Chemical mapping of a 177-nucleotide RNA with DMS and 2A3. Source: RMDB library TTRDES, as collected in RNAgym.
[RMDB]
RNA sequence: GGGAACGACUCGAGUAGAGUCGAAAAGAUAUGGAAUGAGCCCUCCGAUAAGCUCCAGUCGGAAACGACUGUGAGCUUUUGACGGAGGCUCAUUCCUAAGUCAAAUCAAGCACUUCGGUGCUUGAAACGUAUGGAGUACGUUCGCGUACUCCAUACGAAAAGAAACAACAACAACAAC
Reactivity to DMS in 0.01 (KOAc 150mM, MgCl2 10mM, bicine 150mM(pH8.5), 24C), signal-to-noise 2, nucleotides 027 to 126: g000a010u000a100u010g010g000a020a010u000g000a010g010c160c060c060u000c000c000g030a130u010a020a000g030c000u010c000c000a000g000u000c000g030g010a060a060a070c000g020a020c000u000g050u030g020a000g020c000u000u000u000u000g000a210c130g000g000a040g000g020c010u000c000a000u010u000c000c000u000a000a050g000u000c010a120a140a170u000c000a010a020g020c000a000c000u000u020c220g020g020u000g010c010u000u020g010a010a130a240
Reactivity to 2A3 in 0.01 (KOAc 150mM, MgCl2 10mM, bicine 150mM(pH8.5), 24C), signal-to-noise 1, nucleotides 027 to 126: g000a020u020a020u040g000g010a010a030u010g000a010g090c240c210c060u000c000c000g210a270u110a300a010g010c010u010c000c010a000g020u000c010g000g000a090a020a000c000g000a010c020u000g120u040g000a020g020c040u010u010u010u000g050a050c010g000g000a000g000g000c000u000c010a000u010u000c000c000u000a000a000g000u000c010a000a010a130u020c000a020a000g010c010a000c000u060u180c300g200g000u000g000c000u000u010g000a040a010a000